[RMDB]
RNA sequence: GGGAACGACUCGAGUAGAGUCGAAAAGGCCCCCAAGGCACUCACGGCGACCGUGGCCUUCUAGGCCUGGCCGCCAUACGCCCGCCCGCCAACCGCUUCCAACCAACCCAGCAAGCACAACCUCUUUGAUGCAUACCUCUUUCGAGAGGUAUGCAUCAAAAGAAACAACAACAACAAC
Reactivity to 2A3 in 0.01 (KOAc 150mM, MgCl2 10mM, bicine 150mM(pH8.5), 24C), signal-to-noise 1, nucleotides 027 to 126: g040g000c000c000c000c000c000a040a060g010g000c030a030c090u050c010a040c040g000g000c000g030a060c000c000g250u080g000g000c010c020u200u080c140u190a040g000g000c000c000u000g010g030c010c000g000c010c000a010u050a010c010g030c030c030c030g010c020c000c000g010c020c000a120a050c020c000g010c000u070u000c000c020a060a020c000c010a020a090c000c030c000a000g040c020a070a000g070c010a050c000a040a100c000c000u050c000u020u040u060